[RMDB]
The record gives the reactivity of an RNA of 177 nucleotides to DMS. The data come from the RNA Mapping Database (RMDB), library TTRDEL. The reactions ran in a buffer of 150 mM KOAc, 10 mM MgCl2 and 150 mM bicine (pH 8.5), at 24 C. DMS adducts were read by reverse transcription with MarathonRT.

RNA sequence: GGGAACGACUCGAGUAGAGUCGAAAAGAUAUGGAGCGAGUAGGGAGCGUGUGGCUCGGAAACGAGAAUCACGCAUCGAUCUACCGCUCCUAAGUCAAACAAAGGGUUAGUUCGCUAACCCUUUGAACUUUAUAGAAGGGUUCGCCCUUCUAUAAAGAAAAGAAACAACAACAACAAC
Reactivity to DMS in 0.01 (KOAc 150mM, MgCl2 10mM, bicine 150mM(pH8.5), 24C), signal-to-noise 6, nucleotides 027 to 126: g010a010u000a020u010g010g000a020g010c010g000a120g010u000a020g010g000g010a010g040c000g050u000g000u000g010g020c030u000c010g020g000a010a000a020c000g010a010g010a120a050u020c000a000c000g020c000a300u000c200g000a010u010c000u000a000c000c010g010c000u000c000c000u000a000a030g000u000c010a140a130a240c020a000a010a000g000g000g010u000u000a000g000u000u010c220g010c010u000a010a000c000c000c000u000u000u000g000a070a160